[RMDB]
RNA sequence: GGGAACGACUCGAGUAGAGUCGAAAAAAGAGAAUGGAUAAGUCAAUUAUGGUCACUAUUCAAUUGAACAUAUUGUGGCUAUUAAAACAUCAGGUAGAUCUAUCUGUUUAUGCUAACAGAGUAUCCAUGAUGUGGUGUUCAGUGAACAAAGCAAGUACAUAAUCCACCGAUUCGUCGGUGGAUUAUGAAAAGAAACAACAACAACAAC
Reactivity to DMS in 0.01 (KOAc 150mM, MgCl2 10mM, bicine 150mM(pH8.5), 24C), signal-to-noise 2, nucleotides 027 to 156: a060a100g010a130g000a060a010u000g010g020a050u000a030a120g020u010c030a050a090u000u010a020u010g030g000u010c000a090c190u000a110u020u000c090a080a120u020u000g010a020a030c020a040u000a070u000u010g010u010g030g000c020u000a090u000u000a050a090a070a090c040a050u000c010a020g030g020u000a040g000a020u000c100u010a090u020c000u000g000u000u000u000a090u000g020c170u000a000a040c010a010g000a100g000u000a060u000c010c010a100u000g000a040u000g000u020g040g000u000g000u000u000c030a040g000u000g050a050a060c060a030a050a070g060c050a070a050g000u020a130
Reactivity to 2A3 in 0.01 (KOAc 150mM, MgCl2 10mM, bicine 150mM(pH8.5), 24C), signal-to-noise 4, nucleotides 027 to 156: a000a000g070a000g010a030a010u070g020g010a030u050a180a000g010u020c040a050a050u090u030a040u070g010g030u010c010a010c050u070a060u150u110c080a130a100u120u120g050a090a060c040a070u130a040u090u070g020u020g020g000c000u010a030u000u140a040a080a020a000c020a020u030c000a000g040g060u090a030g050a060u030c050u100a100u040c010u020g070u010u040u060a200u250g090c070u030a010a010c000a010g020a010g030u040a010u030c010c020a070u040g000a020u020g010u030g040g060u040g020u020u080c060a060g050u030g090a050a020c030a010a060a010g090c070a030a010g040u070a050
Structure probing data (DMS and 2A3) for a 207-nucleotide construct.
It was measured as part of the RMDB library OK3TST.
Conditions: 150 mM KOAc, 10 mM MgCl2 and 150 mM bicine (pH 8.5), 24 C.
DMS adducts were read by reverse transcription with MarathonRT.
For 2A3 the reverse transcriptase was SuperScript II with manganese.